[RMDB]
RNA sequence: GGGAACGACUCGAGUAGAGUCGAAAAAACUACUUCUUCGGAAGUAGUUAUUGCGUGCGUCUAAUAAGCCCAAGGUGCCAGGUUCGACCCUUGCUGGGCGCAUCACCGACCGAUUCGUCGGUCGGAAUGACGGAAGGAUAUUCGUAUCCUUCCGUCAAAAAGAAACAACAACAACAAC
Reactivity to DMS in 0.01 (KOAc 150mM, MgCl2 10mM, bicine 150mM(pH8.5), 24C), signal-to-noise 2, nucleotides 027 to 126: a030a010c000u000a010c000u000u000c000u000u000c210g010g000a010a000g010u000a000g000u000u000a010u010u010g020c170g020u000g010c020g030u000c020u000a090a080u010a060a130g020c040c060c000a070a060g020g010u000g020c010c030a070g000g030u010u010c110g020a100c070c010c020u010u000g010c050u000g000g000g000c010g000c020a040u000c110a270c010c000g000a000c000c000g000a020u010u020c200g010u000c010g000g020u000c000g000g010a070a050
Reactivity to 2A3 in 0.01 (KOAc 150mM, MgCl2 10mM, bicine 150mM(pH8.5), 24C), signal-to-noise 2, nucleotides 027 to 126: a000a000c010u000a000c000u000u000c000u000u050c240g110g000a030a010g000u010a000g000u000u020a110u060u110g030c030g000u010g010c010g020u000c000u020a100a080u070a290a070g040c020c000c010a030a030g180g010u050g020c000c070a010g050g020u120u220c110g050a160c020c000c000u000u000g010c020u000g010g010g000c010g000c000a030u060c060a060c010c000g010a000c000c000g020a020u010u030c180g040u000c010g080g020u010c000g000g000a010a070